About this RNA:
Chemical mapping of a 177-nucleotide RNA with DMS and 2A3. The 2A3 profile rests on 1,148 reads. As a SHAPE reagent, 2A3 marks flexible, mostly unpaired nucleotides at the ribose 2'-OH. The RNA was probed in 150 mM KOAc, 10 mM MgCl2 and 150 mM bicine (pH 8.5) at 24 C. For DMS the reverse transcriptase was MarathonRT.
RNA sequence: GGGAACGACUCGAGUAGAGUCGAAAACUCAGUUUCCUUAUAUAUAAAAUGGGGUAAGGGGGCCGGGCGCAGUGGCUCACGAAUCCCACACUCUGGGAGGCCAAGGCGAGUGGAUCACCUGAGGUCGCAACGCAUUCGAUUUCGAUCGAAUGCGUUGAAAAGAAACAACAACAACAAC
Reactivity to DMS in 0.01 (KOAc 150mM, MgCl2 10mM, bicine 150mM(pH8.5), 24C), signal-to-noise 1, nucleotides 027 to 126: c000u000c000a060g000u070u000u000c000c000u000u000a100u060a040u010a100u080a100a050a180a090u010g000g010g010g000u010a010a150g070g000g010g000g000c120c040g010g000g000c010g020c020a050g000u020g000g060c030u020c050a060c040g000a100a120u010c030c000c010a050c240a140c050u010c080u000g000g030g050a190g000g000c050c010a030a010g030g050c070g000a050g000u020g000g000a090u010c100a120c040c010u000g000a010g000g010u050c030g010
Reactivity to 2A3 in 0.01 (KOAc 150mM, MgCl2 10mM, bicine 150mM(pH8.5), 24C), signal-to-noise 2, nucleotides 027 to 126: c040u050c040a050g010u010u000u040c000c000u190u040a170u040a130u020a020u060a210a120a130a080u090g020g000g020g000u020a070a030g020g030g000g020g000c000c010g050g010g000c070g010c010a040g070u080g090g000c030u050c020a020c020g050a040a080u030c000c060c000a030c010a010c000u110c020u040g000g030g030a040g020g030c020c010a030a000g030g010c020g000a040g080u100g020g090a100u060c030a060c070c010u060g020a050g080g000u030c060g000